[RMDB]
RNA sequence: GGGAACGACUCGAGUAGAGUCGAAAAGAAGAGCCAGCGGAUGCCUAGAGGAGCCUCGGAGAUCUCGCAGACAUCGCCUACGUUCAGGACCAGCGACUCUAUAGUCGACUCUUCAUAAUCCACCACGUAGCAAUGAUAGCGGAACGAACACGCGUCGUCAUACAGAGGGAUUCGUCCCUCUGUAUGAAAAAGAAACAACAACAACAAC
Reactivity to DMS in 0.01 (KOAc 150mM, MgCl2 10mM, bicine 150mM(pH8.5), 24C), signal-to-noise 2, nucleotides 027 to 156: g000a070a040g000a120g040c010c030a060g020c040g040g050a100u020g000c040c030u000a120g040a130g000g000a120g050c080c040u010c060g080g010a180g000a070u010c010u000c040g000c090a140g020a180c040a050u010c000g010c040c010u000a040c050g030u000u010c080a160g040g010a050c060c010a150g010c020g000a060c010u000c100u000a110u000a100g010u000c010g020a070c010u000c040u000u020c040a130u010a080a120u000c010c000a140c030c050a080c060g000u000a050g020c050a070a080u000g020a050u000a100g060c000g030g010a070a020c080g010a130a090c080a090c080g020c040g010u000c020g000
Reactivity to 2A3 in 0.01 (KOAc 150mM, MgCl2 10mM, bicine 150mM(pH8.5), 24C), signal-to-noise 4, nucleotides 027 to 156: g060a020a010g030a010g070c030c040a050g030c060g120g030a080u090g030c020c020u070a050g000a050g080g010a010g010c000c030u050c080g000g030a050g020a110u030c070u030c060g000c060a050g040a160c040a050u030c060g030c000c020u020a030c040g000u040u090c060a050g030g030a030c040c020a020g010c030g020a010c020u030c040u110a110u170a140g010u000c010g070a180c040u030c000u140u030c050a070u150a080a040u030c010c010a030c020c020a030c070g010u040a010g010c100a120a040u120g010a060u080a050g030c020g000g030a050a050c050g040a060a020c090a010c040g010c010g030u020c030g000
Description:
This 207-nucleotide RNA was probed chemically with DMS and 2A3. Reactivities are given for positions 27 through 156. The reactions ran in a buffer of 150 mM KOAc, 10 mM MgCl2 and 150 mM bicine (pH 8.5), at 24 C.